[RMDB]
RNA sequence: GGGAACGACUCGAGUAGAGUCGAAAAGAAGAGACCGCCACGAGGAGUCAGGGUUCAGACACGAUCCAAGAGAACACGGUCACACUGACUGUGAAGCGGAAGAGGCAAAGAGAGUGGCGGAAGAGAAGCGUGAUAAAUCAUUCGUGAUUUAUCACGCAAAAGAAACAACAACAACAAC
Reactivity to DMS in 0.01 (KOAc 150mM, MgCl2 10mM, bicine 150mM(pH8.5), 24C), signal-to-noise 3, nucleotides 027 to 126: g020a140a050g020a130g010a050c000c000g000c020c000a000c010g020a160g000g020a060g000u000c010a060g000g000g010u020u070c180a060g010a010c030a050c060g000a140u010c050c040a110a130g020a110g010a010a060c060a020c000g000g000u020c010a110c110a080c060u030g000a010c010u000g000u000g000a060a080g030c010g000g010a120a080g000a190g000g000c030a030a090a160g000a050g000a230g010u000g000g000c000g010g000a040a070g030a060g000a150a100
Reactivity to 2A3 in 0.01 (KOAc 150mM, MgCl2 10mM, bicine 150mM(pH8.5), 24C), signal-to-noise 5, nucleotides 027 to 126: g140a030a010g080a000g050a020c000c010g000c010c000a010c010g030a030g130g030a000g010u000c010a010g060g000g000u120u150c100a040g010a020c020a000c090g020a010u000c000c020a180a070g110a000g000a040a010c080a000c050g020g000u010c000a030c010a010c030u040g010a000c010u000g030u080g150a080a020g020c030g070g080a020a020g120a040g060g010c040a020a120a020g150a040g010a000g020u000g000g000c000g000g010a020a000g030a010g020a100a020